This 207-nucleotide RNA was probed chemically with 2A3 and DMS. The 2A3 profile rests on 6,143 reads.

[RMDB]
RNA sequence: GGGAACGACUCGAGUAGAGUCGAAAAGGAUCGUUCGCGAUCCCAGGAGCGUACUACAAAGAGGUACCCACUCCGUUGAAACUCUUCCCAAAUAGGAAGAGUGGAGGAAAUACGGUACUACCCACCUUUGUAUCGCAGGAACGCACUUCGGUGCGAAUGUACAGCUAUGUUUCGACAUAGCUGUACAAAAAGAAACAACAACAACAAC
Reactivity to 2A3 in 0.01 (KOAc 150mM, MgCl2 10mM, bicine 150mM(pH8.5), 24C), signal-to-noise 6, nucleotides 027 to 156: g010g000a010u010c010g020u120u130c300g010c010g100a000u010c000c020c000a080g090g140a150g020c010g010u100a170c030u000a030c030a000a000a010g030a010g000g010u010a020c000c010c020a020c050u000c000c000g050u100u080g030a040a030a000c000u000c000u000u030c000c020c020a170a300a100u270a080g000g000a000a000g000a010g000u010g010g010a030g010g050a040a150a000u170a070c080g000g000u000a020c010u040a040c030c020c030a090c020c010u040u000u000g040u040a080u300c010g000c000a010g050g100a110a080c020g000c010a010c010u090u110c290g050g000u020g000c020g010a040a080
Reactivity to DMS in 0.01 (KOAc 150mM, MgCl2 10mM, bicine 150mM(pH8.5), 24C), signal-to-noise 4, nucleotides 027 to 156: g000g010a020u000c000g010u010u000c200g060c040g020a010u010c000c010c040a050g000g020a110g020c030g000u000a070c110u000a060c020a070a040a120g000a180g000g000u000a030c010c020c090a160c080u000c010c000g000u000u000g020a300a220a040c010u000c000u000u000c000c000c030a060a160a240u000a060g010g000a030a010g020a020g020u000g000g010a150g030g010a060a080a130u000a090c100g010g000u000a030c000u000a030c010c000c070a300c100c000u010u000u010g000u000a010u000c030g030c020a090g010g010a070a150c000g000c000a000c020u000u000c240g050g010u010g010c000g010a020a080
It was measured as part of the RMDB library RNAMAK.